[RMDB]
RNA sequence: GGGAACGACUCGAGUAGAGUCGAAAAAUAGGCUCUCCAACCCAACUCCUACUCAAUACGUCCUCGUCGUACAGAACGGGAACAUGUUUUCCGAACAUCCGCGCUUGGGUAUACGAGUAUACACCUUACAGCACCACUUACUUCGGUAAGUGGUGAACCAUGACUCUAAGUUCGCUUAGAGUCAUGGAAAAGAAACAACAACAACAAC
Reactivity to 2A3 in 0.01 (KOAc 150mM, MgCl2 10mM, bicine 150mM(pH8.5), 24C), signal-to-noise 7, nucleotides 027 to 156: a000u130a040g020g000c020u020c010u020c060c010a070a060c020c000c010a020a060c050u060c040c030u040a020c010u020c030a040a050u050a090c040g080u090c020c030u060c040g120u050c020g020u080a070c040a110g050a100a010c010g020g010g000a010a010c050a110u200g060u020u020u010u010c020c010g010a060a030c020a100u050c060c050g040c010g000c090u050u050g020g020g020u030a030u010a030c060g010a000g050u030a040u040a070c080a090c020c030u120u110a060c050a080g030c010a020c010c000a000c010u000u000a000c000u020u020c090g110g000u000a000a000g000u000g010g000u000g000a000a000
Reactivity to DMS in 0.01 (KOAc 150mM, MgCl2 10mM, bicine 150mM(pH8.5), 24C), signal-to-noise 2, nucleotides 027 to 156: a200u010a000g010g000c000u000c000u010c080c030a100a130c030c040c030a050a070c010u010c030c000u000a070c020u000c030a060a070u000a070c030g010u010c050c000u000c030g010u000c040g050u000a200c140a080g010a100a300c040g010g030g020a030a010c030a200u000g020u000u000u000u000c040c080g030a070a040c000a110u000c020c030g000c010g040c050u000u010g010g010g030u000a030u000a030c070g010a120g000u000a100u000a050c070a020c010c030u000u000a110c100a150g000c000a020c000c000a000c000u000u000a000c010u000u000c300g060g010u010a000a020g000u000g020g020u000g000a010a110